[RMDB]
Notes: Chemical mapping of a 207-nucleotide RNA with DMS and 2A3. 2A3 adducts were read by reverse transcription with SuperScript II with manganese. High 2A3 reactivity points to a flexible backbone, as in loops and unpaired stretches. For DMS the reverse transcriptase was MarathonRT. Conditions: 150 mM KOAc, 10 mM MgCl2 and 150 mM bicine (pH 8.5), 24 C. It was measured as part of the RMDB library M2RFOK.
RNA sequence: GGGAACGACUCGAGUAGAGUCGAAAAACUGCAUCUACGGAUGCAGAACUACGUUCAUCCAAUUUAUUUGGACGCAUGAAAUGAGAAUAGGGAACGGGAUUCUCAUACGUAGGCUACGGCCUGCGAAAAAACUCCUUAUGCUUCGGCAUAAGGAGAACACGAGGAUAACGUUCGCGUUAUCCUCGUGAAAAGAAACAACAACAACAAC
Reactivity to DMS in 0.01 (KOAc 150mM, MgCl2 10mM, bicine 150mM(pH8.5), 24C), signal-to-noise 2, nucleotides 027 to 156: a130c010u010g000c000a000u000c000u010a220c300g040g010a010u000g030c000a000g030a030a100c040u000a030c020g010u020u000c010a150u000c110c170a120a080u000u030u010a160u060u000u000g030g010a030c000g010c050a070u000g010a080a180a120u000g000a030g000a020a170u000a140g000g010g000a040a090c010g030g010g000a300u000u000c000u010c010a030u000a070c040g030u000a000g020g040c000u010a050c290g100g030c000c000u000g000c040g000a000a040a060a020a020a040c000u010c000c000u000u010a000u000g010c020u000u010c300g030g000c000a010u000a000a000g000g000a000g020a030a040
Reactivity to 2A3 in 0.01 (KOAc 150mM, MgCl2 10mM, bicine 150mM(pH8.5), 24C), signal-to-noise 2, nucleotides 027 to 156: a000c000u000g000c010a000u000c010u040a020c230g100g000a010u000g000c000a000g000a010a000c040u120a020c000g010u000u010c000a010u010c010c010a030a020u130u160u090a150u050u080u100g000g000a000c000g010c030a060u100g090a130a120a060u000g000a020g020a020a000u030a010g040g050g000a010a030c000g010g000g000a010u000u000c000u000c000a000u020a040c000g000u000a010g000g000c010u020a020c170g100g000c000c020u000g010c000g000a100a010a000a000a000a010c000u000c000c000u000u000a000u010g010c000u010u060c170g130g000c010a000u000a000a000g000g000a000g000a000a000